[RMDB]
RNA sequence: GGGAACGACUCGAGUAGAGUCGAAAAGAUAUGGAAGCUAUGAAGCCGGCCCAGCGAAGAACUCGGAAACGAGGGAGCUGAUGACGGUGGAGCUUCCUAAGUCAAAACCAUGCGUUCGCGCAUGGAAGCAACCAUUUAAGUUCGCUUAAAUGGUUGCAAAAGAAACAACAACAACAAC
Reactivity to DMS in 0.01 (KOAc 150mM, MgCl2 10mM, bicine 150mM(pH8.5), 24C), signal-to-noise 2, nucleotides 027 to 126: g000a060u040a300u000g020g010a040a010g010c010u000a160u010g020a140a210g020c020c020g000g000c060c100c000a000g020c000g000a140a150g000a110a230c010u000c000g000g000a080a050a190c000g000a000g020g010g010a070g000c020u010g000a030u000g010a020c010g000g020u000g000g000a010g010c010u000u000c000c000u000a020a050g000u010c020a090a130a110a080c010c000a000u000g000c000g000u000u010c290g000c010g020c000a000u000g000g000a010a020
Reactivity to 2A3 in 0.01 (KOAc 150mM, MgCl2 10mM, bicine 150mM(pH8.5), 24C), signal-to-noise 2, nucleotides 027 to 126: g020a030u070a070u170g000g000a030a000g000c010u050a120u300g040a000a000g010c000c000g060g020c040c010c000a000g010c040g120a300a020g000a070a020c010u030c010g000g000a060a060a030c000g030a000g000g030g000a000g050c000u000g040a160u080g040a020c000g030g000u050g020g010a000g010c000u000u000c010c000u000a070a010g030u030c030a030a030a070a120c000c000a000u010g000c000g020u050u100c300g000c030g000c160a000u010g010g000a000a000
Structure probing data (DMS and 2A3) for a 177-nucleotide construct. Source: RMDB library TTRDEL, as collected in RNAgym. Values cover nucleotides 27 to 126. The 2A3 profile rests on 2,524 reads.